[RMDB]
RNA sequence: GGGAACGACUCGAGUAGAGUCGAAAAAUAACUGAUGGUGCCCAUCUCGAAGCCAACGGUCCUGAGCAGUACGUCCUGACAUUUGAUGAUUCUCACCAAGUGAUGGGGGCUGGGCCUCACAGCCUCAAUAUGCUAGUACAUUCGUGUACUAGCAUAUAAAAGAAACAACAACAACAAC
Reactivity to 2A3 in 0.01 (KOAc 150mM, MgCl2 10mM, bicine 150mM(pH8.5), 24C), signal-to-noise 7, nucleotides 027 to 126: a010u080a030a050c030u050g060a060u090g080g040u030g030c000c010c020a040u020c050u020c060g070a070a020g030c010c010a050a040c060g020g020u020c010c010u040g010a020g010c020a010g030u070a030c030g060u030c010c020u040g040a040c020a090u050u070u070g060a070u030g030a040u150u010c040u020c040a040c020c030a060a030g040u040g130a130u160g060g020g000g000g000c010u020g000g040g040c010c000u030c000a060c010a000g010c010c000u010c010a010
Reactivity to DMS in 0.01 (KOAc 150mM, MgCl2 10mM, bicine 150mM(pH8.5), 24C), signal-to-noise 9, nucleotides 027 to 126: a080u010a090a100c080u000g010a090u000g010g010u000g010c040c020c020a090u000c040u000c040g000a100a110g010c040c030a050a100c110g000g010u000c030c020u000g010a110g010c040a060g010u000a060c090g010u000c020c020u000g000a120c060a040u000u000u010g010a060u000g000a140u010u000c120u000c020a070c060c050a050a050g010u010g010a120u010g010g000g000g000g000c020u000g000g010g010c050c030u000c050a160c030a030g010c010c010u000c040a080